[RMDB]
RNA sequence: GGGAACGACUCGAGUAGAGUCGAAAAGGUUAGAUUCGUCUAACCAAAACCUUUGUGGUAAGCCCAUAUUGUCAGAUCUAGGGUCCCAUUGGGACCCGAGCGAUCUUGGAUUUAUAUGGGACUUACCACUCUGGUAAAAGCAGUUGUUCGCAACUGCGAGGUAAGCUAAGUUCGCUUAGCUUACCUCAAAAGAAACAACAACAACAAC
Reactivity to 2A3 in 0.01 (KOAc 150mM, MgCl2 10mM, bicine 150mM(pH8.5), 24C), signal-to-noise 2, nucleotides 027 to 156: g000g000u000u000a010g010a030u070u080c190g060u020c120u000a000a000c000c010a000a000a080a000c010c000u010u010u010g000u010g000g000u010a010a000g000c000c000c010a000u000a000u000u020g020u020c000a030g000a010u000c020u040a030g000g010g000u000c040c020c100a280u210u300g070g000g000a000c000c000c020g000a000g040c100g000a000u000c010u010u100g100g000a030u190u300u060a000u040a000u010g020g000g040a050c000u000u000a000c000c000a000c000u000c000u000g020g040u100a090a100a050a070g010c000a000g000u010u020g040u090u150c180g010c120a010a010c000u000g000c000
Reactivity to DMS in 0.01 (KOAc 150mM, MgCl2 10mM, bicine 150mM(pH8.5), 24C), signal-to-noise 1, nucleotides 027 to 156: g000g030u000u000a000g000a060u000u010c260g060u000c000u010a000a020c000c010a070a040a160a050c010c000u000u000u000g010u000g020g020u000a010a040g000c000c000c000a020u000a010u000u000g000u000c020a070g000a000u000c010u000a300g030g000g000u000c000c010c020a300u000u000g090g090g000a000c000c000c000g000a000g000c220g000a030u000c010u000u010g030g020a040u000u000u000a010u000a020u030g000g000g000a050c010u000u000a010c010c010a010c000u000c040u000g010g010u010a080a070a160a140g010c010a060g000u000u000g020u000u000c200g040c010a000a100c000u000g010c300